[RMDB]
RNA sequence: GGGAACGACUCGAGUAGAGUCGAAAAUCGCUAAGCUUCGGCUUAGCGAAAAGUCGCGGCUUGAGGGCGUGUACGGCUGCGCACACACACGACCCUCAAGGCAAAGCAUCGUGUUCGCACGAUGCAAUCAUGAAGAAGCGUUCGCGCUUCUUCAUGAAAAAGAAACAACAACAACAAC
Reactivity to DMS in 0.01 (KOAc 150mM, MgCl2 10mM, bicine 150mM(pH8.5), 24C), signal-to-noise 3, nucleotides 027 to 126: u000c000g020c010u000a010a000g030c000u000u020c230g040g010c000u000u000a020g010c000g000a000a010a070a100g010u000c080g010c130g000g000c000u000u000g000a020g000g000g020c000g010u000g010u000a090c120g000g000c040u000g020c130g010c050a080c050a100c100a040c010a010c010g000a130c000c000c000u000c010a010a010g010g010c080a100a100a090g020c000a000u000c000g020u000g010u000u000c200g020c000a000c000g010a010u000g000c000a010a020
Reactivity to 2A3 in 0.01 (KOAc 150mM, MgCl2 10mM, bicine 150mM(pH8.5), 24C), signal-to-noise 3, nucleotides 027 to 126: u020c000g000c000u000a000a000g000c000u030u170c280g100g000c010u010u000a000g000c010g000a010a000a000a000g010u030c030g010c070g090g100c010u000u000g000a010g000g000g010c000g010u010g000u010a020c070g050g020c060u150g060c120g000c030a040c000a000c000a000c000a000c080g300a300c000c000c000u010c000a000a010g000g000c030a050a080a010g000c000a000u000c000g000u010g010u020u050c250g010c070a000c000g000a010u000g000c000a000a060